Chemical mapping of a 177-nucleotide RNA with DMS. DMS adducts were read by reverse transcription with MarathonRT.
RNA sequence: GGGAACGACUCGAGUAGAGUCGAAAAGAUAUGGAUCCAAGACAUGCAACUGGGUCGGAAACGACCCAAUUGCAACAGCUUGAGUCCUAAGUCGGUGGCCAAUGGUGGCUUCGGCCACCAUUGGCAAGAUAGUAGCGUCGUUCGCGACGCUACUAUCAAAAGAAACAACAACAACAAC
Reactivity to DMS in 0.01 (KOAc 150mM, MgCl2 10mM, bicine 150mM(pH8.5), 24C), signal-to-noise 1, nucleotides 027 to 126: g000a010u000a300u000g000g000a000u010c030c000a000a040g010a030c140a290u010g010c000a000a000c020u000g000g020g000u000c010g010g000a070a070a210c000g000a000c000c000c000a000a000u010u000g000c000a010a090c300a110g000c000u020u000g010a040g000u000c000c000u010a030a110g000u000c020g020g000u000g000g000c010c000a010a010u000g000g000u000g030g020c000u000u000c220g030g010c010c000a010c000c000a000u000u020g000g000c000a020a010